[RMDB]
RNA sequence: GGGAACGACUCGAGUAGAGUCGAAAAUGGAGGGGUACCGGGUGUACGAGGCAGAGUCCGGUCGUUCUGAGAUUAUACUGUCAUAACUUGAUCUAGAUAAUACUAGCGAAAGGACAUGCGUGGCAUUCCACCUUCCAGGUUUCGACCUGGAAGGUGGAAAAGAAACAACAACAACAAC
Reactivity to 2A3 in 0.01 (KOAc 150mM, MgCl2 10mM, bicine 150mM(pH8.5), 24C), signal-to-noise 2, nucleotides 027 to 126: u050g050g010a010g000g060g050g000u080a020c000c050g000g000g080u120g030u010a010c080g010a080g050g030c030a050g040a000g180u010c000c000g020g010u000c000g000u050u040c060u070g070a100g000a260u000u030a050u100a160c040u050g010u020c000a010u100a150a080c070u060u040g000a000u080c000u020a020g040a050u060a010a010u070a160c010u000a000g000c020g060a070a000a000g000g000a000c000a050u050g000c010g030u000g020g000c060a000u080u050
Conditions: 150 mM KOAc, 10 mM MgCl2 and 150 mM bicine (pH 8.5), 24 C. An RNA of 177 nucleotides, treated with 2A3 and read out base by base. For 2A3, 657 sequencing reads were counted. It was measured as part of the RMDB library RFM100.